[RMDB]
RNA sequence: GGGAACGACUCGAGUAGAGUCGAAAAUAAUGGUGCGGUUACGGCUUCAUCAGCUAGGAUGUACGCUAUUAAGUCUCAAAGGAACUUAAUUCUCUCACUGGUUGAAAGGCCAGGUGUAAACACAUUACGCUACACCUUUGUUCGCAAAGGUGUAGCGAAAAGAAACAACAACAACAAC
Reactivity to 2A3 in 0.01 (KOAc 150mM, MgCl2 10mM, bicine 150mM(pH8.5), 24C), signal-to-noise 2, nucleotides 027 to 126: u200a000a070u110g070g020u050g030c000g020g080u070u080a050c050g030g000c000u010u060c080a080u030c000a000g040c040u040a170g040g040a120u050g080u090a030c040g030c010u000a060u030u040a000a000g050u020c000u000c070a220a300a020g190g000a020a000c000u060u100a040a000u060u000c040u020c000u010c060a100c050u000g000g000u000u030g040a030a010a000g090g000c000c000a020g020g000u010g010u050a030a100a000c040a000c000a030u110u200a030
Reactivity to DMS in 0.01 (KOAc 150mM, MgCl2 10mM, bicine 150mM(pH8.5), 24C), signal-to-noise 2, nucleotides 027 to 126: u030a040a020u000g000g000u000g030c120g000g000u050u000a030c100g000g060c010u000u010c180a140u000c130a030g000c020u000a010g010g000a150u000g000u000a120c130g000c100u000a020u000u000a000a050g000u000c020u000c080a060a140a180g030g000a080a050c020u000u010a020a080u010u000c020u000c000u000c130a170c000u010g000g010u000u000g020a020a100a060g000g000c000c000a110g020g020u020g000u010a020a060a180c090a060c060a100u000u010a120